This 177-nucleotide RNA was probed chemically with DMS and 2A3. Source: RMDB library OK1LIB, as collected in RNAgym. For DMS, 2,915 sequencing reads were counted. DMS adducts were read by reverse transcription with MarathonRT. Reactivities are given for positions 27 through 126.
RNA sequence: GGGAACGACUCGAGUAGAGUCGAAAAUCACAAGCGAAUUGAAAAACAGAACAUUGUGAGCUGGGCCACGAGGAUGAAUCUGGUGAUCGCUGGAUGGUAGGGCGAAGUCGUACCAACACGGAUGCGCAUGUAGAGCGAACUUCGGUUCGCUCUACAUAAAAGAAACAACAACAACAAC
Reactivity to DMS in 0.01 (KOAc 150mM, MgCl2 10mM, bicine 150mM(pH8.5), 24C), signal-to-noise 2, nucleotides 027 to 126: u010c000a090c090a100a030g020c060g000a070a140u010u000g000a150a010a050a070a040c140a050g000a050a110c150a040u030u000g000u000g010a060g000c000u040g020g010g000c040c020a030c040g000a090g010g000a130u010g000a070a090u020c050u020g000g050u000g000a090u020c040g060c010u000g020g030a050u000g000g040u000a080g020g020g010c030g010a020a030g000u010c030g020u000a120c060c050a120a090c120a040c070g020g000a040u020g000c070g000c080
Reactivity to 2A3 in 0.01 (KOAc 150mM, MgCl2 10mM, bicine 150mM(pH8.5), 24C), signal-to-noise 2, nucleotides 027 to 126: u050c010a030c050a080a020g070c020g100a080a110u080u170g120a140a070a000a000a000c040a050g050a090a050c030a130u090u030g050u050g030a000g000c010u060g020g080g010c000c000a010c040g040a040g040g040a050u080g020a110a080u030c040u000g020g000u090g060a050u000c030g000c070u050g010g010a020u050g020g140u080a050g000g000g010c060g060a000a000g110u050c020g000u000a030c020c000a010a080c060a030c040g010g010a010u060g040c010g030c060